[RMDB]
RNA sequence: GGGAACGACUCGAGUAGAGUCGAAAAAGCGCGCUACGGCGCGCAAGGCCGACAGGAGUAAUUCCCGCCGAAACAGGGUUUUCACCCUUCCUUUCUUCGGGUGUCCUUCCUCGCGCCCGCAGGACAACCCUUGCAGCUGAUUCGUCAGCUGCAAGGGAAAAGAAACAACAACAACAAC
Reactivity to 2A3 in 0.01 (KOAc 150mM, MgCl2 10mM, bicine 150mM(pH8.5), 24C), signal-to-noise 1, nucleotides 027 to 126: a000g000c000g000c000g000c000u010a060c300g140g000c020g000c020g000c000a000a000g010g010c040c070g010a070c170a140g000g050a040g020u150a020a050u070u010c000c000c000g000c000c000g030a030a030a100c300a100g020g000g000u080u050u190u240c080a050c000c000c000u040u030c020c000u000u030u000c000u020u010c010g000g010g000u000g010u000c000c000u000u030c000c000u020c000g000c010g000c000c000c010g030c040a020g060g040a040c030a030a170